[RMDB]
RNA sequence: GGGAACGACUCGAGUAGAGUCGAAAAGAAUGUCUUCUUUUGGUUAGGGAUUAGUGGUCUAGGAAGAUGAUGUUAUUGGUUAAAUUAGAGUUUGGAAUUAGUACAUCAAUUUAAUUGGUAGGUUUUUCUAAGUUCCUAUUGGGGCAGUUAAUUAAGAGAGGUAAACUAUGUUCGCAUAGUUUACCUCAAAAGAAACAACAACAACAAC
Reactivity to DMS in 0.01 (KOAc 150mM, MgCl2 10mM, bicine 150mM(pH8.5), 24C), signal-to-noise 2, nucleotides 027 to 156: g020a150a100u010g000u000c050u000u010c010u000u000u000u000g020g020u000u010a060g000g010g010a090u000u000a070g030u000g010g020u000c050u000a130g010g020a090a110g030a100u000g010a090u000g020u000u000a040u000u010g010g020u010u000a040a060a120u000u000a090g000a100g010u000u000u010g010g000a050a080u010u000a080g000u000a100c060a060u010c040a050a090u010u000u000a050a100u000u000g010g020u000a060g030g020u000u010u000u010u000c010u020a040a120g010u000u010c000c020u010a140u000u010g000g010g020g040c030a100g010u000u000a060a110u000u000a070a150g010a300
Reactivity to 2A3 in 0.01 (KOAc 150mM, MgCl2 10mM, bicine 150mM(pH8.5), 24C), signal-to-noise 3, nucleotides 027 to 156: g070a030a030u100g040u040c050u040u020c030u030u060u060u100g050g010u070u070a050g010g010g040a050u050u030a020g030u000g040g020u000c050u050a040g020g030a050a070g020a040u060g000a010u020g040u070u040a070u050u080g020g020u020u080a020a030a070u090u060a050g010a010g070u050u060u070g020g010a050a010u060u000a050g050u030a050c020a050u050c000a020a050u070u080u230a040a050u040u020g050g020u030a020g010g030u010u050u020u000u020c020u030a060a040g010u010u010c010c000u030a130u070u120g020g000g010g000c010a020g080u120u140a080a080u170u230a080a040g170a020